[RMDB]
An RNA of 177 nucleotides, treated with DMS and read out base by base. Reactivities are given for positions 27 through 126. The reactions ran in a buffer of 150 mM KOAc, 10 mM MgCl2 and 150 mM bicine (pH 8.5), at 24 C.
RNA sequence: GGGAACGACUCGAGUAGAGUCGAAAAUAAGCCCAGACUUUUGAGAAGUUGAAAGACCUCUCAGCCCCUCCACCUUGGGGUGCCCUAUUCGAGGCACUGCAGUCUCGAUAGAAAGGCUAAGCACGUCCGGGUAAAUAGUGUUCGCACUAUUUACCCGAAAAGAAACAACAACAACAAC
Reactivity to DMS in 0.01 (KOAc 150mM, MgCl2 10mM, bicine 150mM(pH8.5), 24C), signal-to-noise 1, nucleotides 027 to 126: u010a100a190g000c000c000c000a290g000a110c120u000u010u000u000g010a000g010a000a000g000u000u030g000a150a080a150g000a010c000c040u000c000u000c040a060g010c000c000c000c000u020c210c140a130c170c130u020u000g030g040g000g000u000g000c000c020c000u010a160u000u010c030g000a010g000g000c010a060c170u000g030c300a070g010u000c010u000c000g030a020u000a010g010a010a120a150g000g000c020u000a010a150g010c130a070c200g000u000c220